The data come from the RNA Mapping Database (RMDB), library OK2TST. This 177-nucleotide RNA was probed chemically with 2A3 and DMS. The DMS profile rests on 52,528 reads. Conditions: 150 mM KOAc, 10 mM MgCl2 and 150 mM bicine (pH 8.5), 24 C. The 2A3 profile rests on 54,271 reads.
[RMDB]
RNA sequence: GGGAACGACUCGAGUAGAGUCGAAAACGCGAUGCGAUUCUGCGUCUGCUCGCCGUGGUGGAUGAGCCGGUCUUGCAUCGCCAAUGCGGGAAACCCAUGCAUGCGUUGGGGCACGACGCCGGCCUGGCUACCAUACAAAUUUCGAUUUGUAUGGUAGAAAAGAAACAACAACAACAAC
Reactivity to 2A3 in 0.01 (KOAc 150mM, MgCl2 10mM, bicine 150mM(pH8.5), 24C), signal-to-noise 9, nucleotides 027 to 126: c040g000c010g010a000u030g000c010g030a030u070u030c020u110g040c010g050u030c050u040g010c010u010c020g200c070c060g100u230g090g090u140g030g030a140u050g050a040g050c050c020g020g000u010c010u020u030g000c000a010u010c000g000c000c000a060a050u120g020c050g030g030g010a060a110a100c020c000c010a020u070g010c030a030u070g000c010g050u030u050g040g010g040g030c090a020c060g060a010c020g000c020c020g020g010c000c010u010g030g000
Reactivity to DMS in 0.01 (KOAc 150mM, MgCl2 10mM, bicine 150mM(pH8.5), 24C), signal-to-noise 9, nucleotides 027 to 126: c190g010c010g010a020u000g010c010g000a040u000u000c030u000g020c100g020u000c080u000g010c010u000c040g010c070c090g020u010g020g020u010g010g010a050u000g010a090g020c060c040g000g010u000c040u000u000g010c010a020u000c020g020c010c140a040a050u000g010c050g010g010g000a100a090a130c060c010c020a080u000g010c050a060u000g010c060g010u000u000g010g000g000g000c100a100c050g010a070c060g010c020c050g000g000c010c040u000g010g010